[RMDB]
The record gives the reactivity of an RNA of 177 nucleotides to 2A3 and DMS.
Values cover nucleotides 27 to 126.
For DMS, 2,761 sequencing reads were counted.
In probing experiments dimethyl sulfate is read out at A N1 and C N3, which are open when not base-paired.
The reactions ran in a buffer of 150 mM KOAc, 10 mM MgCl2 and 150 mM bicine (pH 8.5), at 24 C.
RNA sequence: GGGAACGACUCGAGUAGAGUCGAAAAAGGAUACCUUGAUCCCAUUUGUGGGAGGCCACCCACCCAUGAACUGAGCAUCCUGUCUCAGCCGUGAGUACGGGGUGCUGGUCUGUCAUCGCACUCCCCACCUCCUCUGUCAUUUCGAUGACAGAGGAGGAAAAGAAACAACAACAACAAC
Reactivity to 2A3 in 0.01 (KOAc 150mM, MgCl2 10mM, bicine 150mM(pH8.5), 24C), signal-to-noise 2, nucleotides 027 to 126: a000g140g000a160u260a260c030c010u000u050g030a050u050c000c000c020a080u100u150u140g110u060g020g000g020a020g050g010c040c020a070c000c010c000a040c020c000c010a070u080g060a110a030c030u080g060a010g020c010a000u050c000c020u020g020u010c000u000c010a160g100c140c080g300u140g010a010g000u140a010c030g020g000g000g000u000g020c000u000g010g000u030c050u040g080u050c030a090u070c040g030c050a040c050u040c000c000c000c000a050
Reactivity to DMS in 0.01 (KOAc 150mM, MgCl2 10mM, bicine 150mM(pH8.5), 24C), signal-to-noise 3, nucleotides 027 to 126: a030g010g010a170u000a070c030c030u000u000g000a120u010c010c000c010a140u010u010u010g020u000g000g020g010a060g020g000c060c100a090c060c030c050a110c040c070c040a050u010g020a060a060c070u000g000a030g010c000a020u000c020c020u000g000u010c010u000c000a050g000c280c300g010u000g000a020g000u010a020c040g030g020g030g020u010g020c000u010g000g000u000c030u000g000u010c050a040u010c100g010c070a090c070u000c000c010c000c060a250